RNA sequence: GGGAACGACUCGAGUAGAGUCGAAAAGCAGCUUUUCUUUGUUUUGCAUAUGGACUACCAGUAAUGACUCAUAAUGUCUCAACGAGCCUAUUGAACCAGUGCACUGUGAAACAAGCGAGAGUGAUGCAGGGGAUCGCAGAUUCGUCUGCGAUCCCCUAAAAGAAACAACAACAACAAC
Reactivity to 2A3 in 0.01 (KOAc 150mM, MgCl2 10mM, bicine 150mM(pH8.5), 24C), signal-to-noise 1, nucleotides 027 to 126: g000c000a000g030c000u130u270u060u000c080u000u210u000g000u000u080u000u000g000c040a000u170a150u160g150g000a010c040u110a000c000c000a000g000u050a000a120u090g090a020c000u000c060a050u170a300a070u300g150u000c090u070c070a080a170c110g000a000g000c000c000u160a160u040u060g000a090a010c170c060a020g000u070g100c030a050c050u040g110u000g000a000a000a000c000a000a060g010c050g000a000g000a000g000u000g000a120u110g070c110